An RNA of 177 nucleotides, treated with DMS and 2A3 and read out base by base.
The RNA was probed in 150 mM KOAc, 10 mM MgCl2 and 150 mM bicine (pH 8.5) at 24 C.
The DMS profile rests on 4,371 reads.
Values cover nucleotides 27 to 126.
The 2A3 profile rests on 2,815 reads.
[RMDB]
RNA sequence: GGGAACGACUCGAGUAGAGUCGAAAAAGUUAUGAGUUCGCUCAUAACUACAGCGAAAGGCGCUCGGACCCGGAGUCCGCCGAAGGCAUCCCAGCCUGUCCAAGUUGGUAUAUUUCGAUAUACCAAAACCGUUUAAAUCAUUCGUGAUUUAAACGGUAAAAGAAACAACAACAACAAC
Reactivity to DMS in 0.01 (KOAc 150mM, MgCl2 10mM, bicine 150mM(pH8.5), 24C), signal-to-noise 4, nucleotides 027 to 126: a020g000u000u000a000u000g000a010g010u000u010c250g020c000u000c000a000u000a010a000c010u010a080c150a100g010c070g000a060a080a190g010g000c010g010c050u000c040g030g010a160c020c050c050g000g010a120g010u000c120c040g040c030c020g010a160a030g010g010c000a080u000c000c020c000a160g010c020c010u000g000u010c080c140a100a110g010u000u000g000g000u000a000u000a010u000u000u020c150g010a020u010a010u000a010c000c000a020a010a090
Reactivity to 2A3 in 0.01 (KOAc 150mM, MgCl2 10mM, bicine 150mM(pH8.5), 24C), signal-to-noise 2, nucleotides 027 to 126: a000g000u000u010a010u010g010a000g020u040u130c220g060c070u010c000a010u000a000a000c000u010a040c030a030g050c020g120a230a090a030g030g000c030g000c060u030c020g040g170a160c030c030c040g050g000a030g030u100c150c080g000c010c010g050a010a000g020g010c010a040u060c000c010c000a010g020c000c000u020g020u060c070c030a100a050g070u010u010g030g010u010a010u000a000u000u090u020c070g000a000u000a000u010a020c000c000a000a040a000